[RMDB]
RNA sequence: GGGAACGACUCGAGUAGAGUCGAAAAACGGUCAUAUACGUAUGACCGAAUGAGCAUAACAGGGCCACCCCAAAGCGUUCACUUUGUGGCCCCUGUCAGAUUCUGGUAAAUCUGCGAGUUCUGCUAAAUUAGGUAACUCUCUUCGGAGAGUUACCAAGCAGUAUCUACUGUUCGCAGUAGAUACUGCAAAAGAAACAACAACAACAAC
Reactivity to DMS in 0.01 (KOAc 150mM, MgCl2 10mM, bicine 150mM(pH8.5), 24C), signal-to-noise 1, nucleotides 027 to 156: a190c050g030g020u000c010a020u010a050u000a040c220g020u000a020u000g000a050c000c000g000a010a030u000g010a140g040c090a130u010a070a060c000a000g000g020g010c000c060a050c070c040c010c030a010a050a060g020c030g010u000u010c110a030c010u000u000u000g030u000g020g000c110c030c000c000u000g010u010c020a060g000a060u000u000c060u000g020g040u000a060a040a050u000c020u010g020c050g000a190g000u000u000c170u040g000c000u010a110a040a140u000u000a060g030g010u010a000a020c000u010c010u000c000u000u020c300g060g010a030g010a010g040u010u010a000c010c000a010a030
Reactivity to 2A3 in 0.01 (KOAc 150mM, MgCl2 10mM, bicine 150mM(pH8.5), 24C), signal-to-noise 3, nucleotides 027 to 156: a000c000g000g000u010c010a000u000a010u040a040c200g100u020a020u000g000a000c000c000g010a000a080u070g000a010g010c020a040u020a110a070c000a020g020g000g040c030c040a020c020c010c010c030a030a030a000g060c080g120u150u100c040a030c060u020u020u050g020u020g010g000c010c010c000c010u020g040u040c000a010g000a040u050u040c020u280g110g020u080a030a030a020u020c020u010g040c050g010a080g070u030u040c030u030g030c030u110a080a140a150u230u110a120g000g000u000a000a000c000u000c000u000c010u040u040c140g020g010a000g000a000g000u000u000a000c000c000a010a000
Description: Structure probing data (DMS and 2A3) for a 207-nucleotide construct. The RNA was probed in 150 mM KOAc, 10 mM MgCl2 and 150 mM bicine (pH 8.5) at 24 C. 2A3 adducts were read by reverse transcription with SuperScript II with manganese. It was measured as part of the RMDB library M2RFPK.